[RMDB]
Chemical mapping of a 177-nucleotide RNA with DMS and 2A3. The 2A3 profile rests on 1,772 reads. It was measured as part of the RMDB library OK2TST. For DMS the reverse transcriptase was MarathonRT.

RNA sequence: GGGAACGACUCGAGUAGAGUCGAAAAACAUCACUGAUGGUCAGCGCGAUGUUGCGGUGACUGGUGGCGAUAAGCUAAUGACCCGUGUAGUCGGGACCGGCUGCGCAUUAUCUGCGGUGGUGGCGGCCGACCUUGGGCAAUUCGUUGCCCAAGGUCGAAAAGAAACAACAACAACAAC
Reactivity to DMS in 0.01 (KOAc 150mM, MgCl2 10mM, bicine 150mM(pH8.5), 24C), signal-to-noise 2, nucleotides 027 to 126: a100c050a000u000c020a050c070u010g000a100u010g000g010u000c030a010g010c050g030c020g030a180u010g000u000u010g000c000g000g010u010g010a040c030u000g000g020u010g000g000c020g020a050u000a060a080g000c050u000a180a100u010g010a120c020c020c010g030u000g040u000a050g010u020c010g020g000g000a080c060c040g020g000c010u000g030c020g000c050a060u000u010a040u000c140u000g040c020g010g010u000g000g010u000g000g000c090g000g000c120
Reactivity to 2A3 in 0.01 (KOAc 150mM, MgCl2 10mM, bicine 150mM(pH8.5), 24C), signal-to-noise 2, nucleotides 027 to 126: a000c020a020u030c020a020c040u080g040a060u150g070g070u050c040a070g040c040g000c050g170a190u270g030u300u230g030c000g050g090u000g000a040c010u070g010g020u070g040g010c000g020a070u070a200a040g030c030u040a200a050u130g070a130c030c020c020g010u050g020u060a100g050u030c000g000g000g050a070c020c000g000g020c020u020g000c070g010c020a030u080u050a050u200c060u080g030c040g070g000u040g000g000u010g020g060c010g000g000c020